The record gives the reactivity of an RNA of 177 nucleotides to DMS and 2A3. The RNA was probed in 150 mM KOAc, 10 mM MgCl2 and 150 mM bicine (pH 8.5) at 24 C. The 2A3 profile rests on 1,009 reads. It was measured as part of the RMDB library OK2TRN. 2A3 adducts were read by reverse transcription with SuperScript II with manganese. For DMS the reverse transcriptase was MarathonRT.
RNA sequence: GGGAACGACUCGAGUAGAGUCGAAAACAGACCGCCCGGACAGGCUCCAUCGGCGUCAUGAUGGCUCACAGUAAUUACGGUGCUGCGCUGGAGAAACAGGGUGUGGAAAUCACGCUGAUUUACAGCGUCUGUUGACCCAUUUCGAUGGGUCAACAGAAAAAGAAACAACAACAACAAC
Reactivity to DMS in 0.01 (KOAc 150mM, MgCl2 10mM, bicine 150mM(pH8.5), 24C), signal-to-noise 2, nucleotides 027 to 126: c090a110g010a130c040c030g010c000c040c010g000g000a060c190a150g010g020c040u000c000c000a030u000c070g000g020c070g040u000c040a090u000g020a040u000g010g020c020u000c070a090c110a190g000u000a070a050u000u000a050c190g010g000u000g010c040u000g000c140g020c040u000g020g000a100g000a040a120a050c070a120g010g010g020u020g000u000g040g000a110a100a120u010c100a050c030g000c000u010g020a190u010u000u000a100c030a000g020c010g010
Reactivity to 2A3 in 0.01 (KOAc 150mM, MgCl2 10mM, bicine 150mM(pH8.5), 24C), signal-to-noise 1, nucleotides 027 to 126: c030a010g130a100c030c030g020c010c010c000g000g000a020c000a050g150g000c030u040c000c010a090u170c010g030g000c060g030u050c020a030u130g050a040u040g000g010c000u030c020a180c020a040g060u130a030a070u110u110a040c070g060g000u090g060c010u030g010c010g040c030u000g030g000a020g040a070a130a020c050a100g030g010g000u030g060u080g030g070a090a080a040u180c040a030c020g000c020u000g010a110u020u060u200a070c020a010g030c010g040